[RMDB]
An RNA of 207 nucleotides, treated with 2A3 and DMS and read out base by base. The reactions ran in a buffer of 150 mM KOAc, 10 mM MgCl2 and 150 mM bicine (pH 8.5), at 24 C.

RNA sequence: GGGAACGACUCGAGUAGAGUCGAAAAUUGGGAUUUCAGUGUCAUACUCCGCAAGAUAGGAUCUCUCACUCUGUUGAUUCAGCUUUUGGGUAGGGGUAUGCGGCUGCUUAAAUCAUGGCAGGUUGCUGAAGGAAUGGUUAAGCAAGACCAUCUGGUAGCAGGAUAUCUAUUUCGAUAGAUAUCCUGCAAAAGAAACAACAACAACAAC
Reactivity to 2A3 in 0.01 (KOAc 150mM, MgCl2 10mM, bicine 150mM(pH8.5), 24C), signal-to-noise 2, nucleotides 027 to 156: u130u050g050g030g070a020u040u100u040c030a040g030u020g000u120c000a010u010a090c010u020c020c010g060c040a050a000g020a100u140a080g030g040a040u000c030u000c000u020c020a050c080u130c060u050g100u130u070g060a060u120u050c030a000g050c060u140u050u150u120g080g030g010u040a010g000g040g020g000u020a010u010g040c010g050g020c020u020g020c010u090u080a040a120a080u100c040a070u100g080g000c010a040g010g060u110u090g000c030u050g030a060a060g030g020a070a010u020g010g010u060u030a060a050g080c020a070a010g030a010c010c000a030u030c020u020g030g030u040a060
Reactivity to DMS in 0.01 (KOAc 150mM, MgCl2 10mM, bicine 150mM(pH8.5), 24C), signal-to-noise 2, nucleotides 027 to 156: u000u000g030g040g020a180u000u000u000c000a050g040u000g090u000c030a080u000a040c010u000c020c000g020c080a100a160g020a110u020a100g030g010a160u000c010u000c030u000c050a130c110u000c040u000g000u020u000g010a130u030u000c020a130g000c140u000u000u000u000g060g040g030u000a120g020g030g000g040u000a070u020g020c200g020g020c000u000g010c030u010u000a010a050a100u000c070a120u010g000g060c020a030g020g020u000u000g060c010u000g000a120a070g030g020a100a070u010g040g020u000u000a000a160g030c200a110a150g010a030c020c010a030u000c020u010g060g000u000a230
High 2A3 reactivity points to a flexible backbone, as in loops and unpaired stretches. The data come from the RNA Mapping Database (RMDB), library OK3TST.